Chemical mapping of a 207-nucleotide RNA with 2A3 and DMS. For 2A3, 1,103 sequencing reads were counted. For DMS, 1,683 sequencing reads were counted.
RNA sequence: GGGAACGACUCGAGUAGAGUCGAAAACUUUUUCAGCAAUUUUAGCGAUAUGAGAUUCAGCUAAUUUAACAGCGUGCUGCUUGACGGUAGCUUCGAAUACAGUGCCGAAAGUUUCUUUUGCUUCCGGAGAAAUAUUAACUGAUUCGAAAAUACUAUCAUAAUGCGCAUGAUUCGUCAUGCGCAUUAUAAAAGAAACAACAACAACAAC
Reactivity to 2A3 in 0.01 (KOAc 150mM, MgCl2 10mM, bicine 150mM(pH8.5), 24C), signal-to-noise 3, nucleotides 027 to 156: c000u060u060u040u160u160c030a010g010c020a050a100u030u080u060u060a020g000c010g050a040u040a100u260g230a220g050a190u060u060c040a010g000c010u020a030a040u080u070u090a190a060c060a080g070c080g100u060g010c000u000g030c000u030u050g040a030c050g000g000u000a010g030c000u000u010c000g000a000a000u110a160c020a020g000u010g080c010c010g040a030a010a010g010u000u080u100c070u120u260u130u160g020c020u020u020c060c020g030g000a030g070a080a140a040u190a080u130u100a040a000c000u000g010a000u000u010c000g000a000a000a000a020u070a020c030u040a040u040c010
Reactivity to DMS in 0.01 (KOAc 150mM, MgCl2 10mM, bicine 150mM(pH8.5), 24C), signal-to-noise 1, nucleotides 027 to 156: c090u000u000u000u000u000c060a180g030c000a070a080u000u000u000u010a040g010c080g000a080u000a100u000g000a200g020a210u010u010c100a230g050c030u000a040a020u030u000u010a040a080c110a140g010c050g090u000g000c030u000g000c030u000u010g030a040c010g010g040u060a050g000c080u000u000c000g000a010a050u000a100c030a040g040u010g010c040c010g000a010a010a080g030u010u000u010c120u000u030u000u000g030c040u010u000c020c020g000g010a140g000a060a040a160u010a120u000u000a130a070c010u010g000a180u000u050c000g010a010a050a050a100u000a020c010u000a040u000c030
For DMS the reverse transcriptase was MarathonRT. It was measured as part of the RMDB library OK3TST. The reactions ran in a buffer of 150 mM KOAc, 10 mM MgCl2 and 150 mM bicine (pH 8.5), at 24 C.